Overview
An RNA of 177 nucleotides, treated with DMS and 2A3 and read out base by base. Reactivities are given for positions 27 through 126. The data come from the RNA Mapping Database (RMDB), library OK2TRN.
RNA sequence: GGGAACGACUCGAGUAGAGUCGAAAACCCACUUUGUUUGUGUAAAUAGAGUGUGGAAUCUUGACUUUUGUGGGUGAGGAGGGUAGCAGAAAGUCAGUGGCAUGCCACAGUCCGUUUAAAAUUGCCCACGCAAUUGACAAUUCGUUGUCAAUUGCGUAAAAGAAACAACAACAACAAC
Reactivity to DMS in 0.01 (KOAc 150mM, MgCl2 10mM, bicine 150mM(pH8.5), 24C), signal-to-noise 3, nucleotides 027 to 126: c010c000c000a110c130u010u000u000g010u000u000u010g010u010g010u010a040a030a050u000a010g000a030g020u010g010u010g000g020a100a080u010c060u000u000g010a060c040u000u000u000u010g020u000g010g020g020u010g000a110g000g010a080g000g020g020u010a090g010c080a110g000a060a040a040g000u000c020a040g020u000g000g020c110a070u000g000c020c020a010c050a060g010u000c030c030g030u000u000u000a040a040a090a120u010u010g000c010c020c040
Reactivity to 2A3 in 0.01 (KOAc 150mM, MgCl2 10mM, bicine 150mM(pH8.5), 24C), signal-to-noise 2, nucleotides 027 to 126: c000c010c010a000c000u050u020u050g090u010u040u070g160u040g110u180a030a030a010u030a030g030a020g030u080g020u110g000g030a050a050u030c050u060u150g080a090c000u020u110u060u080g060u140g050g020g040u120g040a030g090g100a080g000g000g000u030a020g050c000a020g090a060a040a010g020u030c030a000g060u060g010g000c070a070u110g000c000c000a030c000a050g090u000c010c000g030u050u050u050a080a060a010a000u070u080g000c000c010c000